[RMDB]
Structure probing data (2A3 and DMS) for a 307-nucleotide construct. It was measured as part of the RMDB library POS240. The reactions ran in a buffer of 150 mM KOAc, 10 mM MgCl2 and 150 mM bicine (pH 8.5), at 24 C. The 2A3 profile rests on 2,435 reads. Values are in units of 0.01, from 0 to 300, in steps of 10.
RNA sequence: GGGAACGACUCGAGUAGAGUCGAAAACAGGCGUUCGCGCCUGAGACGAACGUGAGUUCGUCACUCCACGGUGACGUGGAGAAGCCUACCGACAAAUGUCGAAACGGAUAUAAGAAUACCCGUAUGACCUCUGGGUCAUAGGUAUACUACGCUAAUAACAAUUAACAUAACCAUUGGUCGACAAUGUAUCCUGUUCUUGGAAACAAGAAGAAAGACAAAGUAAGGUAGCCGUCUUUGUAGCAAUACAACAGACAGGAGAAGAAAGAAGCUGCGAGUUCGCUCGCAGCAAAAGAAACAACAACAACAAC
Reactivity to 2A3 in 0.01 (KOAc 150mM, MgCl2 10mM, bicine 150mM(pH8.5), 24C), signal-to-noise 3, nucleotides 027 to 266: c000a000g000g000c000g000u060u090c200g040c000g010c150c000u060g000a050g000a000c000g000a000a000c010g070u100g100a070g010u010u010c000g000u000c000a030c000u000c000c000a010c000g020g050u220g050a030c000g000u000g000g000a000g000a010a000g000c000c000u000a010c000c020g060a040c020a040a110a030u010g000u000c010g010a300a160a020c000g010g000a000u010a000u010a050a120g130a130a020u010a060c000c020c090g140u110a070u020g000a000c000c010u070c250u300g250g020g020u000c010a010u000a000g000g010u010a010u010a040c020u010a030c050g020c070u090a030a020u100a090a090c160a080a190u240u120a130a030c060a110u200a170a040c090c020a020u020u030g020g060u150c050g040a050c040a110a000u050g020u000a010u000c000c000u010g020u010u000c000u010u000g030g020a030a050a020c010a010a020g000a000a000g020a020a000a000g000a010c000a000a000a000g040u010a020a010g000g000u000a000g020c030c020g000u000c020u080u000u000g000u000a000g000c010a040a090u010a010c010a010a000c030a060g010a040c070a090g040g140a090g050a170a090g120a090a110a050g200a140a020
Reactivity to DMS in 0.01 (KOAc 150mM, MgCl2 10mM, bicine 150mM(pH8.5), 24C), signal-to-noise 1, nucleotides 027 to 266: c000a000g000g010c000g010u000u000c180g030c010g000c000c000u000g000a090g000a030c000g010a000a000c000g000u020g000a190g050u000u020c000g000u020c030a260c000u030c000c010a020c000g010g010u060g000a140c000g050u000g000g020a100g000a100a100g050c180c000u020a000c000c010g030a040c020a170a280a180u000g020u010c010g000a030a240a000c100g000g040a050u000a030u000a120a070g010a210a050u000a000c000c010c290g000u030a000u000g010a020c020c000u030c300u040g040g020g010u000c000a000u000a140g000g000u000a020u010a090c000u000a200c250g000c030u000a010a000u000a060a040c180a070a140u020u000a100a040c110a130u010a130a110c250c140a050u000u000g010g050u020c080g010a110c140a120a180u040g000u020a040u000c000c000u000g060u020u000c000u000u000g000g000a120a120a300c020a020a000g000a020a020g000a030a010a100g000a020c000a010a050a060g000u000a080a180g000g000u000a020g000c050c010g000u000c020u000u000u010g000u020a000g020c220a080a070u010a000c010a000a000c160a040g010a030c010a120g000g000a130g040a150a100g030a150a140a210g030a160a120